This 177-nucleotide RNA was probed chemically with DMS.
[RMDB]
RNA sequence: GGGAACGACUCGAGUAGAGUCGAAAAGAUAUGGACCCUGAACUACGCUCGCCCAACCCGAAGAACAUUCCCUCUUUCGGAAACGAAAGAGGGAAUGGGAGGGUGCACGAGCGCAGGGUCCUAAGUCGUAGCUGAUAAUCUUCGGAUUAUCAGCUACAAAAGAAACAACAACAACAAC
Reactivity to DMS in 0.01 (KOAc 150mM, MgCl2 10mM, bicine 150mM(pH8.5), 24C), signal-to-noise 2, nucleotides 027 to 126: g010a080u010a280u000g000g010a050c010c010c010u000g000a170a080c200u030a300c010g040c030u020c000g020c300c290c070a300a010c000c010c030g020a190a180g130a210a110c030a000u000u000c000c000c010u000c010u000u000u000c010g010g000a110a100a250c000g000a010a000a000g010a020g000g000g000a010a000u000g010g000g000a140g010g020g000u000g010c300a060c070g010a000g000c000g000c000a010g000g030g010u020c000c000u000a000a000g010u000c060